[RMDB]
RNA sequence: GGGAACGACUCGAGUAGAGUCGAAAACUUAUUAAGCAUGAGAAAGGGGGAGUAGGAAGUGUAUGGAUUCACCUUUGUAACUUUGCAAAGAAGAAUAUGAAAGGGACACUCAGGAGUAUCCAGGAUGAGUUACAGCUAAAUUCGUUUAGCUGUAACUAAAAGAAACAACAACAACAAC
Reactivity to DMS in 0.01 (KOAc 150mM, MgCl2 10mM, bicine 150mM(pH8.5), 24C), signal-to-noise 9, nucleotides 027 to 126: c050u000u010a080u010u010a120a120g020c090a070u000g000a100g010a050a100a100g000g010g010g010g010a080g020u000a050g000g000a060a070g010u000g010u000a100u000g000g000a060u000u000c040a100c110c010u000u000u010g010u010a050a150c170u000u000u010g010c070a030a040a060g000a100a120g000a050a050u010a060u010g010a040a050a080g000g000g000a080c090a030c110u000c080a060g000g010a070g010u010a050u000c020c030a060g010g010a090u010g000
Reactivity to 2A3 in 0.01 (KOAc 150mM, MgCl2 10mM, bicine 150mM(pH8.5), 24C), signal-to-noise 5, nucleotides 027 to 126: c010u030u040a020u160u230a150a030g020c040a030u100g040a020g050a130a060a050g030g010g020g000g000a050g020u040a020g030g030a070a030g020u030g000u080a060u130g040g020a000u030u010c030a030c020c000u010u000u010g010u010a110a120c080u100u200u170g010c040a010a080a000g040a050a020g020a050a030u140a050u110g090a050a030a030g050g000g000a010c020a010c040u030c020a020g020g000a030g030u040a040u000c020c020a010g090g020a070u130g030

Chemical mapping of a 177-nucleotide RNA with DMS and 2A3. Reactivities are given for positions 27 through 126. Source: RMDB library OK2TRN, as collected in RNAgym.